[RMDB]
RNA sequence: GGGAACGACUCGAGUAGAGUCGAAAAGAGCAGUGGGAAUGGGAACAUGGAGGAAAGCCUAUCCUGUUUGUUUCCUCCUCCAGAAACAGAGGUGGAAGCUUGGUCCGGUGUUUCCCAAUGCCUCCCAAUACCAAUGCCUUUUCGAAGGCAUUGGUAUAAAAGAAACAACAACAACAAC
Reactivity to DMS in 0.01 (KOAc 150mM, MgCl2 10mM, bicine 150mM(pH8.5), 24C), signal-to-noise 4, nucleotides 027 to 126: g010a110g020c020a020g000u000g010g000g010a090a080u030g010g010g000a040a050c030a020u020g030g010a060g000g020a080a090a100g000c100c050u010a140u010c010c010u000g010u000u000u020g000u000u000u000c000c030u010c020c020u010c030c080a160g010a080a060a100c280a080g000a010g010g000u000g010g000a080a050g020c010u000u000g010g010u020c030c040g000g010u020g030u010u020u010c000c000c000a040a020u000g010c020c020u000c000c000c000a110
Reactivity to 2A3 in 0.01 (KOAc 150mM, MgCl2 10mM, bicine 150mM(pH8.5), 24C), signal-to-noise 8, nucleotides 027 to 126: g070a010g000c050a020g030u080g030g040g030a070a110u080g020g010g020a020a020c010a030u060g030g040a240g150g040a190a040a010g040c010c020u070a100u100c010c010u050g090u090u070u050g010u000u010u030c010c020u030c000c020u010c020c020a040g080a030a050a010c030a000g010a010g040g070u030g010g040a070a010g000c010u030u050g040g030u080c010c000g000g030u060g030u020u050u030c010c000c010a010a010u030g000c000c010u010c000c000c000a000

Annotation:
Chemical mapping of a 177-nucleotide RNA with DMS and 2A3. DMS adducts were read by reverse transcription with MarathonRT. Reactivities are given for positions 27 through 126.